RNA sequence: GGGAACGACUCGAGUAGAGUCGAAAAGUCUAGCGAAGGGAUCCCACCCGGGAGACACGCAAGUCGCGAAUUAGGCCGACCGGCCAAGGUCAAUGGCAGAACUCAACUGCAUGAGUAAGCUAGACGAACGAUAGGCUGAUUUCGAUCAGCCUAUCGUAAAAGAAACAACAACAACAAC
Reactivity to 2A3 in 0.01 (KOAc 150mM, MgCl2 10mM, bicine 150mM(pH8.5), 24C), signal-to-noise 1, nucleotides 027 to 126: g000u000c020u000a000g000c030g120a240a110g020g030g020a070u060c000c000c000a060c050c000c030g000g120g000a080g020a000c050a000c080g000c020a200a050g070u040c020g000c040g060a060a080u150u060a170g040g100c040c030g040a040c040c050g000g050c000c060a050a050g000g020u050c010a030a070u160g080g020c000a020g080a150a050c060u080c180a060a070c000u020g000c050a040u060g030a030g150u020a010a010g000c020u010a010g000a010c020g020a020
Reactivity to DMS in 0.01 (KOAc 150mM, MgCl2 10mM, bicine 150mM(pH8.5), 24C), signal-to-noise 1, nucleotides 027 to 126: g000u000c000u020a000g040c010g000a120a080g000g000g000a130u000c000c000c000a300c170c010c030g000g000g000a150g000a130c030a040c040g010c070a140a040g010u030c230g010c100g000a060a060u000u020a060g000g020c040c000g000a040c010c170g020g060c090c090a050a120g000g000u000c000a120a030u000g000g000c020a010g010a060a040c100u010c140a030a040c080u000g020c070a030u020g000a100g020u010a010a240g000c010u000a000g000a030c000g040a130